RNA sequence: GGGAACGACUCGAGUAGAGUCGAAAACUUUACGAUCGUGUCAAAGUCAGAACGCCGCUCACCGUUGCAAGAGUUACACCCGACGCGGUGCGACCACGAUCGCGUCUAUACAAGCGACAAAUACCCGGCAGCGGGCACGCGCUACAUUUGCGUUGACCGGUGUAUAUCCAUUCGUGGAUAUACACCGAAAAGAAACAACAACAACAAC
Reactivity to DMS in 0.01 (KOAc 150mM, MgCl2 10mM, bicine 150mM(pH8.5), 24C), signal-to-noise 1, nucleotides 027 to 156: c010u020u010u010a050c000g010a030u000c020g020u000g040u000c110a130a110a080g060u000c000a100g010a060a070c010g010c000c000g020c000u000c030a070c030c010g030u010u000g000c000a040a160g020a240g010u030u000a000c010a160c060c000c020g010a060c140g030c010g000g070u000g000c010g030a130c040c010a060c040g040a040u010c020g030c010g060u000c060u030a180u000a050c060a060a160g010c000g000a110c040a070a070a040u000a060c000c030c030g040g000c140a190g010c090g000g000g010c030a000c080g000c260g040c020u000a040c080a150u000u010u030g020c020g000u010u000g000a070c110
Reactivity to 2A3 in 0.01 (KOAc 150mM, MgCl2 10mM, bicine 150mM(pH8.5), 24C), signal-to-noise 4, nucleotides 027 to 156: c020u050u120u150a060c030g010a020u000c000g000u010g100u120c100a140a130a090g030u020c020a050g050a200a040c010g010c000c020g000c010u020c040a110c040c050g050u040u070g040c060a120a050g050a020g090u090u060a040c040a030c050c060c060g070a050c070g000c010g020g000u000g040c030g040a030c020c020a030c030g000a000u010c000g000c030g000u060c070u060a160u040a220c070a100a070g020c000g130a080c040a030a120a040u110a080c000c050c000g050g000c060a050g100c030g010g030g030c020a020c040g030c000g010c010u100a080c030a180u110u140u220g040c010g020u040u030g020a030c010
Structure probing data (DMS and 2A3) for a 207-nucleotide construct. Reactivities are given for positions 27 through 156. It was measured as part of the RMDB library OK3TST.